[RMDB]
RNA sequence: GGGAACGACUCGAGUAGAGUCGAAAAGGGGUCAGCGGGAGUCCGACCAGGAGCUUUGAUCGUACUGAAGCCUCCACGGUACGGGAGCUCCUGAUCGGACUUUGAUCGCUGACGGAGGCACCCAAAACACACGAACAAGCUUCGGCUUGUUCGUGUGCUGAGACUAACAGUUCGCUGUUAGUCUCAGAAAAGAAACAACAACAACAAC
Reactivity to 2A3 in 0.01 (KOAc 150mM, MgCl2 10mM, bicine 150mM(pH8.5), 24C), signal-to-noise 2, nucleotides 027 to 156: g040g020g120g020u010c000a000g010c010g000g000g000a010g000u010c000c000g030a000c000c010a000g000g000a000g010c040u300u220u020g000a000u000c000g000u000a000c000u030g040a110a020g000c000c000u000c010c000a000c000g000g010u010a000c000g000g000g000a000g020c000u020c020c000u000g010a000u000c010g000g000a000c000u020u030u010g000a000u000c000g000c000u000g000a000c000g000g010a000g000g000c000a020c000c010c010a030a100a020a030c000a000c000a000c000g000a000a000c000a000a000g010c010u080u300c290g120g000c000u000u100g000u000u000c000g000u000g000u000g000
An RNA of 207 nucleotides, treated with 2A3 and read out base by base. The reactions ran in a buffer of 150 mM KOAc, 10 mM MgCl2 and 150 mM bicine (pH 8.5), at 24 C. Values cover nucleotides 27 to 156. It was measured as part of the RMDB library RNAMAK. 2A3 adducts were read by reverse transcription with SuperScript II with manganese.